[RMDB]
RNA sequence: GGGAACGACUCGAGUAGAGUCGAAAAAAAGGGAAGCCGGUUAAUAUUCCGGCACCUGGAUGUGGAUUCUCCACGGCAACGUAACUGAACGCGGAGACGUCGGCAGGAGUCCUGGGAAGAGUUCUCUUUAACGUAGACAAUUCGUUGUCUACGUUAAAAAAGAAACAACAACAACAAC
Reactivity to DMS in 0.01 (KOAc 150mM, MgCl2 10mM, bicine 150mM(pH8.5), 24C), signal-to-noise 4, nucleotides 027 to 126: a100a120a110g000g000g000a170a150g040c000c000g010g010u000u000a130a120u020a260u040u050c020c000g000g030c000a010c000c000u000g010g010a130u010g030u010g000g010a090u000u000c020u000c000c020a010c010g000g000c060a070a110c070g000u010a100a100c210u020g000a080a060c070g020c040g010g000a120g000a030c120g030u000c060g010g000c050a060g010g000a120g000u010c020c010u010g010g030g000a050a060g010a220g000u000u000c000u000c040u020
Reactivity to 2A3 in 0.01 (KOAc 150mM, MgCl2 10mM, bicine 150mM(pH8.5), 24C), signal-to-noise 3, nucleotides 027 to 126: a010a000a010g030g010g010a090a010g000c030c000g000g040u030u020a130a050u050a150u240u090c000c000g000g010c000a020c000c020u010g030g010a050u110g030u130g110g010a050u110u000c040u000c020c000a010c010g030g000c060a060a020c070g050u090a080a050c050u100g190a120a010c090g000c010g020g000a050g010a060c040g030u040c070g030g040c090a050g000g080a010g030u010c000c020u070g000g040g030a060a060g060a060g020u020u000c010u000c000u000